The record gives the reactivity of an RNA of 207 nucleotides to 2A3 and DMS. 2A3 adducts were read by reverse transcription with SuperScript II with manganese. It was measured as part of the RMDB library M2RFPK. The reactions ran in a buffer of 150 mM KOAc, 10 mM MgCl2 and 150 mM bicine (pH 8.5), at 24 C. Values cover nucleotides 27 to 156.
RNA sequence: GGGAACGACUCGAGUAGAGUCGAAAAUUGAUGAUUUGUUGUGUAACUUCAUUUAAAUGAAUUGAAACAAAUUUAAUACAAGUGGAUGUAGGAUAACCGUCCGUCCUUUACAUUGGUAUAAAAGUGAACGACACAGACCUCUUCGGAGGUCUGUGAACCAUACAAUGUACUUCGGUACAUUGUAUGGAAAAGAAACAACAACAACAAC
Reactivity to 2A3 in 0.01 (KOAc 150mM, MgCl2 10mM, bicine 150mM(pH8.5), 24C), signal-to-noise 3, nucleotides 027 to 156: u090u070g030a050u010g010a040u020u060u090g030u000u010g030u020g020u050a080a020c010u030u020c020a050u040u080u250a130a150a040u110g020a020a040u050u070g040a020a020a040c070a020a110a080u090u070u100a100a030u120a090c040a050a070g010u050g120g020a040u080g040u160a030g000g010a020u030a100a060c040c030g020u030c020c010g030u030c010c000u050u080u000a040c030a070u060u080g160g000u110a110u060a140a090a020a030g060u060g080a050a020c040g110a020c010a000c000a000g000a000c010c000u020c000u020u030c120g080g010a000g000g000u000c000u000g000u000g000a000a000
Reactivity to DMS in 0.01 (KOAc 150mM, MgCl2 10mM, bicine 150mM(pH8.5), 24C), signal-to-noise 2, nucleotides 027 to 156: u010u010g010a110u000g000a050u000u000u000g010u010u000g000u010g000u010a060a150c120u000u000c010a050u010u000u010a080a110a080u000g010a040a070u000u010g010a170a090a090c030a040a030a040u000u000u000a070a110u000a100c010a050a050g030u000g010g010a090u010g010u010a050g000g010a040u000a060a140c080c140g000u000c040c030g000u010c000c000u000u020u000a010c020a130u000u020g000g020u010a050u000a010a040a040a100g020u000g000a050a060c030g010a220c000a010c030a030g000a010c000c000u000c000u000u010c300g040g010a030g000g020u010c010u000g000u010g000a010a070